Source: RMDB library TTRDEL, as collected in RNAgym. An RNA of 177 nucleotides, treated with DMS and 2A3 and read out base by base. In probing experiments dimethyl sulfate is read out at A N1 and C N3, which are open when not base-paired. The DMS profile rests on 631 reads. The RNA was probed in 150 mM KOAc, 10 mM MgCl2 and 150 mM bicine (pH 8.5) at 24 C. 2A3 adducts were read by reverse transcription with SuperScript II with manganese. For DMS the reverse transcriptase was MarathonRT.
RNA sequence: GGGAACGACUCGAGUAGAGUCGAAAAGAUAUGGAGUGGUGACUAGCGUGGAGGUCGGAAACGACUACCCACCCACGAACUACUAGCAAUGCCACUCCUAAGUCAAAGGCGUCCUUCGGGACGCCAAGGUACCGAUACAGUUCGCUGUAUCGGUACCAAAAGAAACAACAACAACAAC
Reactivity to DMS in 0.01 (KOAc 150mM, MgCl2 10mM, bicine 150mM(pH8.5), 24C), signal-to-noise 1, nucleotides 027 to 126: g000a150u010a300u000g000g000a000g020u000g000g070u000g000a090c010u000a020g010c060g000u030g000g030a110g000g000u010c000g000g000a020a090a300c050g010a020c000u000a080c070c020c090a300c030c000c000a000c000g000a140a030c080u000a300c070u000a010g000c030a050a150u020g000c000c020a000c000u000c000c000u000a010a010g000u010c070a020a180a100g000g000c000g000u000c010c000u000u010c160g000g010g040a010c000g000c000c000a000a000
Reactivity to 2A3 in 0.01 (KOAc 150mM, MgCl2 10mM, bicine 150mM(pH8.5), 24C), signal-to-noise 1, nucleotides 027 to 126: g030a020u030a060u210g000g000a000g000u010g000g000u120g070a200c010u010a010g010c020g020u010g000g020a010g010g030u000c000g020g000a070a070a000c000g000a010c000u040a060c020c060c010a060c010c010c000a020c030g060a120a030c050u260a020c020u040a170g000c100a200a100u290g000c000c000a000c010u000c000c000u000a090a020g000u010c070a050a040a120g000g000c010g000u020c050c000u070u110c300g070g040g000a010c050g000c000c000a000a010